[RMDB]
RNA sequence: GGGAACGACUCGAGUAGAGUCGAAAAUGCGAAAUGCUGCACCCGAUCUGCCGUGCGAGGUGGAAGUGGACUCGCUUGAGCAGCUCGAUGCCGUGCUGCCGGAAAAACCCGAGCUGAUCCUGCUGGACGAACUGAGUGAAUUCGUUCACUCAGUUCGAAAAGAAACAACAACAACAAC
Reactivity to DMS in 0.01 (KOAc 150mM, MgCl2 10mM, bicine 150mM(pH8.5), 24C), signal-to-noise 3, nucleotides 027 to 126: u010g010c040g000a120a060a100u000g030c050u000g000c060a120c030c020c050g000a070u010c020u000g000c030c020g000u000g000c050g010a040g020g020u030g030g000a070a080g010u000g010g010a150c010u000c030g020c030u000u000g000a150g010c010a010g000c040u000c010g010a280u010g020c120c100g010u000g010c040u010g020c040c030g020g000a030a060a070a130a070c090c030c010g000a080g030c020u010g010a050u010c010c030u000g000c070u010g000g010a300
Reactivity to 2A3 in 0.01 (KOAc 150mM, MgCl2 10mM, bicine 150mM(pH8.5), 24C), signal-to-noise 3, nucleotides 027 to 126: u140g000c050g050a080a060a120u200g020c030u040g010c000a030c000c020c010g010a030u000c020u010g000c010c000g040u030g020c020g000a030g050g040u120g080g070a090a060g100u170g060g030a040c010u010c020g030c000u070u300g040a060g020c000a000g020c030u010c000g100a090u120g030c040c010g010u010g000c030u030g000c000c010g040g030a060a090a030a050a060c010c010c010g000a010g000c020u020g010a060u030c000c010u060g030c030u040g020g020a010
An RNA of 177 nucleotides, treated with DMS and 2A3 and read out base by base. 2A3 adducts were read by reverse transcription with SuperScript II with manganese. The data come from the RNA Mapping Database (RMDB), library OK2TST. Reactivities are given for positions 27 through 126.